Structure probing data (2A3 and DMS) for a 177-nucleotide construct. Source: RMDB library OK1LIB, as collected in RNAgym.
RNA sequence: GGGAACGACUCGAGUAGAGUCGAAAACGAUUGCCCGUAUAUGCCAAUUCUCUCAUGAGAAUGAGAGGAAGUUUCCAUACGGGCAAUGAUAUGCAUGGAGUAUGGAAACUUCCUCCAUGACGCAUAAGGUAGUGCUUGAUUUCGAUCAAGCGCUACCAAAAGAAACAACAACAACAAC
Reactivity to 2A3 in 0.01 (KOAc 150mM, MgCl2 10mM, bicine 150mM(pH8.5), 24C), signal-to-noise 9, nucleotides 027 to 126: c080g110a120u110u210g080c010c020c010g060u110a140u010a010u090g030c030c040a100a120u040u010c000u000c010u030c070a110u250g010a010g020a060a030u080g080a110g000a010g090g010a010a020g000u000u000u000c010c000a000u010a000c000g010g030g000c000a000a000u000g000a000u030a030u070g060c040a040u170g180g060a130g040u010a000u010g000g000a020a020a020c000u010u000c000c000u000c000c000a000u020g010a020c080g010c030a020u020a100a030
Reactivity to DMS in 0.01 (KOAc 150mM, MgCl2 10mM, bicine 150mM(pH8.5), 24C), signal-to-noise 4, nucleotides 027 to 126: c190g000a100u060u020g000c010c010c020g040u030a070u020a020u000g000c020c130a180a050u020u000c000u000c000u000c190a140u050g000a040g010a050a010u010g020a100g000a010g000g020a030a010g000u000u000u010c020c000a020u000a000c010g010g010g000c030a000a010u010g010a160u040a110u000g000c010a120u040g000g010a190g000u000a010u010g010g010a020a010a020c000u000u010c010c000u010c000c010a040u030g010a100c250g010c040a020u000a040a140